[RMDB]
The record gives the reactivity of an RNA of 207 nucleotides to 2A3. The 2A3 profile rests on 1,273 reads. Source: RMDB library RNAMAK, as collected in RNAgym. Conditions: 150 mM KOAc, 10 mM MgCl2 and 150 mM bicine (pH 8.5), 24 C.

RNA sequence: GGGAACGACUCGAGUAGAGUCGAAAAAAAAACGCUGGGUCCGACAAGACUGCGUGUUGUAUCAACGUACCUGAAGCGCGCACGGGUACGUGACCACGCAAUUAUCGCAGUACGGACCUGUGCUGAAGCGCGCACGGCAACCGAAAGGUGCGAAAAACACAGUAUGAUCCUUCGGGAUCAUACUGUGAAAAGAAACAACAACAACAAC
Reactivity to 2A3 in 0.01 (KOAc 150mM, MgCl2 10mM, bicine 150mM(pH8.5), 24C), signal-to-noise 2, nucleotides 027 to 156: a000a010a010a000a060c000g020c000u010g010g000g000u020c000c000g000a030c040a120a020g080a040c040u000g030c020g000u010g000u010u030g050u030a270u230c070a060a010c000g000u010a000c000c010u010g050a130a040g000c000g000c000g030c000a020c030g000g010g000u000a020c020g010u000g030a060c030c030a020c030g020c030a010a030u280u090a140u260c050g020c070a010g030u040a040c000g000g000a000c000c000u000g010u010g000c010u020g000a110a020g020c000g000c000g010c000a000c000g040g000c030a050a010c020c000g070a100a070a050g040g000u060g030c020g000a120a020a000a000a050